Chemical mapping of a 207-nucleotide RNA with 2A3 and DMS. Source: RMDB library M2RFPK, as collected in RNAgym. Values cover nucleotides 27 to 156. 2A3 adducts were read by reverse transcription with SuperScript II with manganese. For DMS the reverse transcriptase was MarathonRT. Conditions: 150 mM KOAc, 10 mM MgCl2 and 150 mM bicine (pH 8.5), 24 C.
RNA sequence: GGGAACGACUCGAGUAGAGUCGAAAAAUGGUAGUUAGUCUACUCGCUAUCCUAGUUACUUUGGAGUAAUCUAAAGUGUGUGUAAACGGGCGAAAGUCUGUAAAAUACCGGGGACAUAGGGUCAACAAGAACUAGUAGACCUUCGGGUCUACUAGAACAUAUAGCUAGGUUUCGACCUAGCUAUAUGAAAAGAAACAACAACAACAAC
Reactivity to 2A3 in 0.01 (KOAc 150mM, MgCl2 10mM, bicine 150mM(pH8.5), 24C), signal-to-noise 4, nucleotides 027 to 156: a010u060g010g020u030a030g010u100u060a030g050u050c040u040a050c010u030c030g040c030u050a080u100c000c010u050a050g050u070u080a040c010u020u020u060g000g010a030g030u100a120a100u010c020u030a060a000a000g010u050g010u000g000u000g020u070a130a080a020c010g010g010g000c030g040a030a010a010g020u020c020u020g050u070a070a040a050a030u070a050c020c030g020g010g040g010a020c030a020u090a030g040g000g000u060c040a030a020c020a090a070g060a060a030c000u000a000g000u000a000g000a000c000c000u010u040c100g080g000g000u000c000u000a000c000u000a000g000a000a000
Reactivity to DMS in 0.01 (KOAc 150mM, MgCl2 10mM, bicine 150mM(pH8.5), 24C), signal-to-noise 3, nucleotides 027 to 156: a090u010g000g000u000a040g020u010u000a110g010u000c010u010a040c020u010c060g010c050u000a060u010c010c020u000a130g000u010u000a040c000u010u010u000g020g010a040g010u000a110a170u000c010u000a010a020a030g000u000g030u010g020u000g020u010a050a190a070c030g010g030g020c010g030a190a080a220g010u010c010u010g000u000a030a050a060a100u000a040c020c000g010g030g000g020a070c050a110u000a060g010g010g000u000c040a050a080c080a100a060g010a100a150c000u000a020g010u000a010g000a030c010c000u000u010c300g060g020g010u000c000u000a000c010u000a010g000a040a090